[RMDB]
RNA sequence: GGGAACGACUCGAGUAGAGUCGAAAAAGGCACUUCGCAAUGUGUGCUCAAACAUUGCUUAUUCAAACACGCUUCACAAGGUGCGACAAAGAAACAUUGUUAUAAGAGCUAAUGUUUUAACAUUGGCAAAACCGAGUUAGCUUCGGCUAACUCGGAACAUUACCUUACGCUUCGGCGUAAGGUAAUGAAAAGAAACAACAACAACAAC
Reactivity to DMS in 0.01 (KOAc 150mM, MgCl2 10mM, bicine 150mM(pH8.5), 24C), signal-to-noise 2, nucleotides 027 to 156: a060g020g010c000a050c030u010u000c040g000c020a080a040u010g020u000g010u000g000c050u000c090a120a100a040c050a060u000u000g020c110u010u000a040u000u010c040a100a080a080c030a050c020g010c030u020u010c090a100c060a070a070g000g020u010g020c010g010a250c100a080a090a150g000a200a070a090c050a130u000u000g000u000u000a110u010a140a100g000a290g000c010u000a020a010u000g010u000u010u000u000a080a080c010a020u000u000g000g030c000a060a010a100a120c000c000g010a030g000u000u000a010g000c010u000u010c300g090g000c000u000a000a020c000u010c000g010g000a030a050
Reactivity to 2A3 in 0.01 (KOAc 150mM, MgCl2 10mM, bicine 150mM(pH8.5), 24C), signal-to-noise 7, nucleotides 027 to 156: a000g130g010c000a000c010u020u020c030g000c000a000a010u000g010u000g010u010g010c090u090c180a040a050a000c000a010u010u010g010c000u080u110a200u140u130c110a060a100a030c050a010c080g080c030u100u090c090a050c040a170a040g070g000u040g010c010g050a050c050a030a130a020g060a040a100a010c040a080u040u080g050u090u090a140u050a240a080g030a010g030c000u000a000a000u010g040u010u130u030u190a110a030c000a000u010u000g000g000c000a000a050a020a060c000c000g000a000g000u000u000a000g000c000u030u040c200g060g000c000u000a000a000c000u000c000g000g000a000a000
The record gives the reactivity of an RNA of 207 nucleotides to DMS and 2A3. For DMS the reverse transcriptase was MarathonRT. Source: RMDB library M2RFPK, as collected in RNAgym. The 2A3 profile rests on 7,971 reads.